An RNA of 177 nucleotides, treated with 2A3 and DMS and read out base by base. Values cover nucleotides 27 to 126. Source: RMDB library OK2TRN, as collected in RNAgym.
RNA sequence: GGGAACGACUCGAGUAGAGUCGAAAAAUAUAGUAUAUACCGUGCUUUUUAUACUGAAAACGGCGAAUAUCAGAGCAAAUCCAGUUACACUCAGCCCCUAACUCUGGAUUUUUAGCUAAUAGCUCGAUACUUAGGGUUAAUUCGUUAACCCUAAGUAAAAAGAAACAACAACAACAAC
Reactivity to 2A3 in 0.01 (KOAc 150mM, MgCl2 10mM, bicine 150mM(pH8.5), 24C), signal-to-noise 1, nucleotides 027 to 126: a000u150a000u060a040g010u010a080u000a000u000a110c030c010g010u030g030c060u000u200u050u060u110a130u120a170c060u130g040a050a070a030a090c050g040g020c020g040a050a010u080a040u090c050a050g000a000g090c010a020a000a000u000c010c000a030g030u120u060a040c090a050c090u120c060a130g120c000c000c000c000u010a030a000c030u000c020u050g060g000a020u090u010u000u020u010a010g000c010u030a060a000u020a140g000c000u000c000g000a010
Reactivity to DMS in 0.01 (KOAc 150mM, MgCl2 10mM, bicine 150mM(pH8.5), 24C), signal-to-noise 4, nucleotides 027 to 126: a100u000a100u010a090g010u010a130u010a120u000a120c060c030g010u000g000c060u010u000u000u010u010a060u000a100c100u000g000a030a060a110a050c100g000g010c060g000a060a070u010a060u000c100a070g010a050g030c040a050a040a020u000c000c000a020g000u000u000a090c180a080c140u010c150a120g000c050c010c000c060u000a050a070c120u010c010u000g000g010a020u000u000u020u000u010a070g010c070u010a050a060u010a070g010c020u000c040g010a180